[RMDB]
RNA sequence: GGGAACGACUCGAGUAGAGUCGAAAAGCAUCCUUAGUCCUUGCAAUGUUGAUCGAAGCUGGCUUGAUCAAGGUAACCUCCCCGUCACAGAAUAAAUGCAAAAAUUUUGCCGUUUGAAAGCGCUAACUCUGUUUUGCCCUAGUCCCUAGCUGUCUUAACCAGUAAAUGAGUUCGCUCAUUUACUGGUAAAAGAAACAACAACAACAAC
Reactivity to 2A3 in 0.01 (KOAc 150mM, MgCl2 10mM, bicine 150mM(pH8.5), 24C), signal-to-noise 2, nucleotides 027 to 156: g030c000a040u030c010c000u040u010a000g050u020c010c010u030u060g020c050a040a190u140g030u060u050g010a090u100c050g040a030a010g020c010u060g020g000c000u060u050g010a050u070c060a070a040g080g000u060a070a090c020c030u060c010c010c020c020g050u050c030a090c010a000g080a040a050u140a140a060a030u120g030c030a080a040a040a040a040u120u170u100u170g030c020c000g020u010u050u120g100a070a090a010g010c010g000c000u030a040a030c010u000c010u030g070u040u060u100u090g020c000c000c000u020a010g000u020c020c010c000u020a020g000c050u090g000u050c000u000u050a020
Reactivity to DMS in 0.01 (KOAc 150mM, MgCl2 10mM, bicine 150mM(pH8.5), 24C), signal-to-noise 3, nucleotides 027 to 156: g020c040a130u000c020c020u000u000a170g010u000c050c030u000u000g030c030a100a120u010g020u000u000g010a100u010c040g010a100a120g020c020u000g040g000c020u000u000g000a110u000c030a020a080g030g010u010a060a100c050c030u000c030c010c000c040g020u000c060a130c060a100g010a080a080u010a030a090a080u010g020c050a030a030a100a090a150u010u010u000u000g030c050c050g010u010u010u000g010a080a110a150g040c030g020c030u000a020a070c020u000c020u010g000u000u000u000u000g020c010c000c030u010a090g010u000c010c010c010u000a190g000c020u010g010u000c010u000u000a230
This 207-nucleotide RNA was probed chemically with 2A3 and DMS. For 2A3, 1,056 sequencing reads were counted. The RNA was probed in 150 mM KOAc, 10 mM MgCl2 and 150 mM bicine (pH 8.5) at 24 C. Values are in units of 0.01, from 0 to 300, in steps of 10. For DMS, 6,492 sequencing reads were counted. Values cover nucleotides 27 to 156.